[RMDB]
RNA sequence: GGGAACGACUCGAGUAGAGUCGAAAAACGUAAUUCGUUACGUCGCCUACCUUUGUGACCUCAGUACUCCCAUUGUCAGUUGAGGACCCAUUGGGUCUGUAAGCUUGGAUUUAUGGGAGGAACCGGUCACUCUGGUCUGUUUACUUUUCGAAGUAAAAAAUUCCUUAUCAUUCGUGAUAAGGAAUUUAAAAGAAACAACAACAACAAC
Reactivity to 2A3 in 0.01 (KOAc 150mM, MgCl2 10mM, bicine 150mM(pH8.5), 24C), signal-to-noise 7, nucleotides 027 to 156: a000c010g000u010a000a040u100u090c170g040u120u000a000c010g000u020c020g100c010c000u010a010c010c010u010u000u010g000u010g000a000c000c000u000c000a000g000u000a000c000u010c000c000c010a010u000u020g010u010c010a010g000u020u020g090a100g020g000a010c000c010c070a300u230u300g030g000g000u010c010u050g140u140a010a000g000c010u100u190g160g010a060u240u300u160a000u040g000g000g000a000g000g000a000a000c010c000g010g000u000c000a000c000u000c000u000g000g000u000c040u020g060u010u040u030a090c010u010u060u100u180c210g140a050a030g130u180a130a020a060
Reactivity to DMS in 0.01 (KOAc 150mM, MgCl2 10mM, bicine 150mM(pH8.5), 24C), signal-to-noise 2, nucleotides 027 to 156: a010c010g040u010a010a040u000u000c270g030u010u000a010c010g020u000c020g000c030c020u000a060c010c010u000u000u000g010u000g020a020c010c010u000c020a120g020u000a280c000u000c000c010c020a080u000u000g000u000c000a070g020u000u000g010a300g010g000a040c010c000c010a300u000u000g030g040g020u000c000u010g010u000a140a120g000c010u000u010g060g020a050u000u000u000a030u010g020g010g010a030g010g000a070a050c220c300g000g000u000c010a000c010u000c020u000g000g000u000c130u010g000u010u000u000a060c050u000u000u010u010c070g020a060a090g030u040a000a040a080